An RNA of 177 nucleotides, treated with DMS and 2A3 and read out base by base.
RNA sequence: GGGAACGACUCGAGUAGAGUCGAAAAGACGAACGAAAACACUAAUGUUCCACGGUGCAGAAGGGUCCCUCACAUGAGGAUCACCCAUGUAACUCGGACAGGAUAUGCUUUUGGGAAAAAGAGAGAACUAUAGACCACGAUUCGUCGUGGUCUAUAGAAAAGAAACAACAACAACAAC
Reactivity to DMS in 0.01 (KOAc 150mM, MgCl2 10mM, bicine 150mM(pH8.5), 24C), signal-to-noise 5, nucleotides 027 to 126: g020a100c070g000a110a120c060g010a050a030a050a040c050a020c070u000a160a120u000g010u000u000c010c030a080c150g020g010u000g000c020a030g020a080a120g010g000g000u010c170c000c000u000c000a190c220a110u020g000a020g030g000a030u010c160a030c000c000c000a080u000g010u000a020a040c020u010c150g010g000a040c030a030g000g000a070u010a050u000g010c040u000u000u000u000g010g010g000a030a040a050a020a090g000a090g020a100g010a060a130
Reactivity to 2A3 in 0.01 (KOAc 150mM, MgCl2 10mM, bicine 150mM(pH8.5), 24C), signal-to-noise 5, nucleotides 027 to 126: g050a030c060g030a080a030c020g040a020a030a060a000c060a010c050u080a100a070u050g040u210u070c020c000a030c060g020g000u020g000c010a020g020a290a130g070g000g030u030c020c020c000u000c010a250c040a200u300g010a010g010g010a020u100c030a010c000c000c000a000u030g010u010a050a030c010u010c050g000g010a010c020a010g020g030a050u050a020u230g030c020u010u040u060u040g050g020g050a050a040a020a140a000g100a010g010a000g040a070a020

For DMS the reverse transcriptase was MarathonRT. The reactions ran in a buffer of 150 mM KOAc, 10 mM MgCl2 and 150 mM bicine (pH 8.5), at 24 C. The 2A3 profile rests on 5,902 reads. The data come from the RNA Mapping Database (RMDB), library M2PK90.